[RMDB]
RNA sequence: GGGAACGACUCGAGUAGAGUCGAAAAAUCGGCGCGGAUUCAAGACCAUCCUGAAGAGCGUCUCGGGCAAGUUCCGGAAUGGAGAGAUCACAGCUAUCAUGGGACCCUCAGGAGCCGGAAAGAGUACUAGCCCUAGUUCAUUCGUGAACUAGGGCUAAAAAGAAACAACAACAACAAC
Reactivity to DMS in 0.01 (KOAc 150mM, MgCl2 10mM, bicine 150mM(pH8.5), 24C), signal-to-noise 1, nucleotides 027 to 126: a070u010c090g040g010c010g120c120g000g000a080u010u000c190a040a110g030a150c070c040a300u000c000c010u010g000a040a100g010a100g030c080g030u000c000u000c030g010g010g020c000a100a100g000u010u000c050c010g020g030a110a090u010g010g010a030g000a140g000a170u000c150a020c100a080g010c010u000a020u010c070a160u010g000g000g000a040c030c000c010u010c000a020g000g000a110g000c020c100g050g000a040a070a070g000a070g000u020a100c170